[RMDB]
RNA sequence: GGGAACGACUCGAGUAGAGUCGAAAAAGGGAUCGGUUGACAGAAAUUGGAAAGAAUUGUGCGUUUAUUGGUUCCUUGACGAAAGAACGCAAGAUGUCGAGACUUCUCAAUCAAGCUGUUAAUGAUCGAAAGGUCAAGUUUUCGAACUUGACCUUUCAAAAGAAACAACAACAACAAC
Reactivity to DMS in 0.01 (KOAc 150mM, MgCl2 10mM, bicine 150mM(pH8.5), 24C), signal-to-noise 3, nucleotides 027 to 126: a120g030g010g010a000u000c010g010g000u000u000g010a050c010a010g010a030a040a050u000u000g000g000a050a010a020g000a040a170u000u000g010u010g020c030g020u000u000u000a120u020u010g000g010u010u000c080c050u000u000g030a120c240g000a050a060a300g000a030a020c010g030c010a050a040g010a060u010g000u010c020g010a040g010a240c020u000u000c010u010c000a020a010u000c070a120a130g000c010u000g010u000u000a030a040u000g010a040u000c040
Reactivity to 2A3 in 0.01 (KOAc 150mM, MgCl2 10mM, bicine 150mM(pH8.5), 24C), signal-to-noise 2, nucleotides 027 to 126: a020g130g020g010a010u030c030g190g150u010u020g010a000c010a010g010a020a090a020u020u020g030g050a070a050a000g020a020a080u050u070g030u100g050c020g030u020u020u120a120u110u080g070g000u020u050c020c000u010u090g020a000c060g080a060a010a040g010a020a000c020g000c100a000a030g040a050u090g060u140c000g020a000g000a030c020u010u020c030u000c020a000a040u000c020a050a000g000c000u000g000u030u020a040a040u050g010a020u030c050